[RMDB]
Chemical mapping of a 177-nucleotide RNA with DMS and 2A3. DMS adducts were read by reverse transcription with MarathonRT. Reactivities are given for positions 27 through 126. Source: RMDB library TTRDEL, as collected in RNAgym. The RNA was probed in 150 mM KOAc, 10 mM MgCl2 and 150 mM bicine (pH 8.5) at 24 C.

RNA sequence: GGGAACGACUCGAGUAGAGUCGAAAAGAUAUGGAAUAGUCACGUGUACCGAAGAACUCGGAAACGAGGGAGGUACCGUGAGCUAUUCCUAAGUCAAAAGGUAAAGGUAGUUCGCUACCUUUACCAACUAUCCUGGUGAGUUCGCUCACCAGGAUAGAAAAGAAACAACAACAACAAC
Reactivity to DMS in 0.01 (KOAc 150mM, MgCl2 10mM, bicine 150mM(pH8.5), 24C), signal-to-noise 3, nucleotides 027 to 126: g020a020u000a300u000g020g000a010a000u000a010g000u000c010a010c010g000u020g040u000a000c000c000g030a090a210g030a070a200c000u000c000g010g000a120a090a180c000g010a010g010g000g000a070g010g000u010a000c000c000g000u010g000a080g010c000u000a000u010u000c010c000u000a020a060g010u000c080a050a040a150a120g000g010u000a000a010a010g010g010u000a000g000u000u010c240g020c010u000a000c000c000u000u000u000a000c000c010a020a060
Reactivity to 2A3 in 0.01 (KOAc 150mM, MgCl2 10mM, bicine 150mM(pH8.5), 24C), signal-to-noise 2, nucleotides 027 to 126: g020a030u070a010u130g010g000a000a010u000a000g030u050c010a000c050g280u300g000u170a000c000c000g140a290a040g040a040a000c000u000c010g000g070a140a110a040c010g000a010g010g000g020a020g040g000u000a000c000c000g010u000g010a010g030c000u010a030u000u000c010c000u020a050a000g040u010c030a000a070a020a110g000g000u000a000a000a000g000g020u010a010g040u050u110c230g050c110u010a000c000c000u000u000u000a000c000c000a000a000